[RMDB]
RNA sequence: GGGAACGACUCGAGUAGAGUCGAAAAAGCAAUGCUCCUUGGUUGCAGCCAGCGCUGGUCCUGCUCAGCUGUCAGCCAGAAAAGACAAAUAGCAGUCCUUCUGUCUAGGCUGCCAGUCAAGUGCAGAUCUCGCUAUUCCAUUCGUGGAAUAGCGAGAAAAAGAAACAACAACAACAAC
Reactivity to DMS in 0.01 (KOAc 150mM, MgCl2 10mM, bicine 150mM(pH8.5), 24C), signal-to-noise 2, nucleotides 027 to 126: a110g000c070a140a090u000g030c050u010c190c050u010u010g020g000u000u000g000c050a020g020c030c050a030g020c050g050c030u020g000g000u000c300c030u000g000c020u000c160a140g000c150u000g000u030c000a090g070c060c090a090g000a060a060a080a040g000a050c000a010a090a170u000a050g020c070a030g000u000c000c000u000u000c060u010g020u020c020u000a130g000g060c000u000g000c010c020a000g000u000c000a000a030g000u000g000c000a120g000a100
Reactivity to 2A3 in 0.01 (KOAc 150mM, MgCl2 10mM, bicine 150mM(pH8.5), 24C), signal-to-noise 2, nucleotides 027 to 126: a000g120c090a110a050u070g030c020u080c170c000u000u020g030g020u080u020g060c000a000g030c020c000a030g000c020g000c020u010g030g030u040c020c030u000g010c000u010c030a020g040c060u000g000u010c000a020g010c080c050a070g140a030a130a000a020g030a010c010a010a080a000u050a020g000c010a020g040u050c000c000u030u000c070u060g120u060c020u010a060g010g000c010u030g010c020c000a000g000u040c020a050a040g010u020g010c010a050g030a080